[RMDB]
RNA sequence: GGGAACGACUCGAGUAGAGUCGAAAAGAGAUGCAAGAAAAGUAUAGGGCCAUGGAAGGGAUGCUCAAGGAGUUGUUUAUACUAUUCUUUCACCAUUCACAUGAUGAUUAAUUCCAAAACAAGCUCCCCUGCAGUAAGAUUUCGAUCUUACUGCAGGAAAAGAAACAACAACAACAAC
Reactivity to 2A3 in 0.01 (KOAc 150mM, MgCl2 10mM, bicine 150mM(pH8.5), 24C), signal-to-noise 1, nucleotides 027 to 126: g050a010g000a000u060g040c050a040a080g040a140a180a030a010g040u040a060u070a060g000g000g050c090c070a060u110g020g060a010a010g110g060g000a020u020g020c010u010c100a040a060g040g000a020g040u010u030g000u080u150u000a100u050a020c090u040a040u000u050c000u000u020u020c010a000c060c000a010u030u080c030a060c010a080u070g000a020u000g000a010u050u040a050a030u010u080c030c040a050a070a000a050c020a050a020g060c000u020c020c010
Reactivity to DMS in 0.01 (KOAc 150mM, MgCl2 10mM, bicine 150mM(pH8.5), 24C), signal-to-noise 3, nucleotides 027 to 126: g010a110g000a060u010g020c050a070a100g010a050a050a080a060g010u000a050u000a100g000g010g010c100c120a040u020g000g010a080a070g000g000g010a040u010g010c050u000c080a100a100g000g000a050g010u000u000g010u000u000u000a080u000a110c090u000a090u000u000c080u010u000u000c010a040c020c010a060u010u000c180a070c160a060u000g010a030u000g000a060u000u000a050a100u000u000c030c080a050a050a070a060c120a030a070g010c060u010c010c030
Structure probing data (2A3 and DMS) for a 177-nucleotide construct. It was measured as part of the RMDB library OK2TRN. For DMS, 2,104 sequencing reads were counted. For 2A3, 963 sequencing reads were counted. The reactions ran in a buffer of 150 mM KOAc, 10 mM MgCl2 and 150 mM bicine (pH 8.5), at 24 C.